[RMDB]
RNA sequence: GGGAACGACUCGAGUAGAGUCGAAAACGCGGCGCUCGACCUCGAGUUCGCCAGCAUCGCGCGGGUGGCCGGCGAGGCGCUAGAGGGGGCGAGACGGUUCGCCGCGGGUGCCGGUCGGCAUGGGGCCAAAUCAGCUUCAGUUCGCUGAAGCUGAUUUAAAAGAAACAACAACAACAAC
Reactivity to 2A3 in 0.01 (KOAc 150mM, MgCl2 10mM, bicine 150mM(pH8.5), 24C), signal-to-noise 2, nucleotides 027 to 126: c010g020c040g040g000c040g000c030u030c050g030a090c020c010u030c010g030a040g050u080u040c010g070c000c000a000g080c000a020u090c030g070c040g010c050g230g040g080u190g120g120c010c040g000g030c040g030a090g060g110c030g000c120u100a040g100a050g090g040g000g060g010c000g010a010g030a050c080g110g060u130u170c020g020c010c000g000c050g010g030g010u030g040c000c010g030g100u080c070g000g000c040a020u050g020g030g010g050c000c010
Reactivity to DMS in 0.01 (KOAc 150mM, MgCl2 10mM, bicine 150mM(pH8.5), 24C), signal-to-noise 3, nucleotides 027 to 126: c070g010c010g010g000c020g000c170u000c010g000a130c090c020u010c020g000a100g030u000u000c070g010c000c020a090g010c050a120u000c040g020c080g020c030g020g010g030u000g010g020c020c020g010g000c030g000a060g010g020c060g010c080u010a090g000a250g010g000g020g010g030c020g000a070g010a120c120g010g000u000u010c040g010c000c010g030c030g010g000g020u000g000c010c050g010g000u000c090g010g000c060a040u010g010g010g000g020c170c080